[RMDB]
RNA sequence: GGGAACGACUCGAGUAGAGUCGAAAACUUACAAUGAGAUCAAGAGCCCCUCUGCUCCGAUAUUUGGAUAUGAUUAUGAAGACAUGGAGUAUCUGCCUACCUUAGGGGUCCAAACGUUGAAGCUCCAGUGUAGCGCUGAGUUCGCUCAGCGCUACACAAAAGAAACAACAACAACAAC
Reactivity to 2A3 in 0.01 (KOAc 150mM, MgCl2 10mM, bicine 150mM(pH8.5), 24C), signal-to-noise 1, nucleotides 027 to 126: c090u130u030a230c120a050a100u300g090a000g020a100u030c050a080a040g000a020g050c000c000c000c000u000c000u000g000c000u040c120c000g000a000u070a030u000u000u000g090g000a100u000a090u070g260a260u240u050a220u290g140a070a000g140a090c000a050u000g070g070a000g000u070a000u000c000u000g040c070c030u000a090c160c000u090u170a220g000g000g020g020u060c030c000a170a000a020c090g000u000u000g050a090a100g070c000u000c000c090a000